[RMDB]
RNA sequence: GGGAACGACUCGAGUAGAGUCGAAAACGACGGACUGGACGGGAUGGCUCCGGACCGAAGCUCCAGAGAUUCCGACUGCCUGCUCACCUGCGGAGCUGGAGGCGCUUUUGGCGCAUGAGGCGCGGGCCCCAUAGAGAAAGUUCGCUUUCUCUAUGGGAAAAGAAACAACAACAACAAC
Reactivity to 2A3 in 0.01 (KOAc 150mM, MgCl2 10mM, bicine 150mM(pH8.5), 24C), signal-to-noise 4, nucleotides 027 to 126: c030g090a030c020g000g020a020c010u020g000g010a010c000g000g000g070a050u070g050g000c020u010c020c000g020g040a040c020c000g040a070a010g050c040u030c020c000a010g020a010g000a130u170u090c020c000g040a060c090u090g020c000c000u020g010c010u020c030a050c010c010u050g010c040g030g000a020g010c010u030g080g130a120g110g000c010g030c000u150u210u220u300g080g000c020g010c040a030u070g040a020g030g000c020g000c000g010g010g000c010
Reactivity to DMS in 0.01 (KOAc 150mM, MgCl2 10mM, bicine 150mM(pH8.5), 24C), signal-to-noise 5, nucleotides 027 to 126: c090g010a300c060g000g000a090c020u000g000g010a120c040g010g010g010a080u000g010g000c040u000c000c020g010g010a080c020c030g000a120a120g010c170u000c010c010a010g010a160g010a180u010u000c020c000g000a170c130u000g010c020c010u000g010c010u000c160a140c040c020u000g020c010g010g000a030g010c010u000g000g000a130g010g010c010g000c020u000u010u000u000g010g010c010g030c000a090u000g000a070g010g020c090g010c010g000g000g000c110